[RMDB]
RNA sequence: GGGAACGACUCGAGUAGAGUCGAAAAUUUCACUUCCCUUCCAGCCCAGCACAGACCAUAUGGCUGUUCAAAUGAAUCACAGUCCUAUAAUCUAUUUCCUCUGUGUUAUGCCUAGGAUAUUGAACGAUGCUGGAGAAAAGGAAUGAUACAAAACUCAGCAUUUAGUAUGCUUCGGCAUACUAAAUGCAAAAGAAACAACAACAACAAC
Reactivity to 2A3 in 0.01 (KOAc 150mM, MgCl2 10mM, bicine 150mM(pH8.5), 24C), signal-to-noise 2, nucleotides 027 to 156: u040u040u040c030a060c030u060u050c000c000c020u000u030c010c110a010g000c010c010c000a000g000c010a010c000a010g030a090c000c100a010u040a030u160g020g020c000u000g010u020u010c050a030a100a090u270g120a060a010u180c050a010c000a000g030u050c000c030u060a040u040a100a060u120c090u140a090u030u130u000c010c000u010c040u010g010u040g030u300u270a020u210g010c000c000u010a020g000g010a000u000a080u090u090g030a050a010c130g070a140u030g000c030u000g000g000a040g010a100a130a000a020g020g040a050a030u140g030a040u060a160c120a090a030a030a000c080u170c060a040
Background
Structure probing data (2A3) for a 207-nucleotide construct. It was measured as part of the RMDB library OK3TST. The 2A3 profile rests on 546 reads.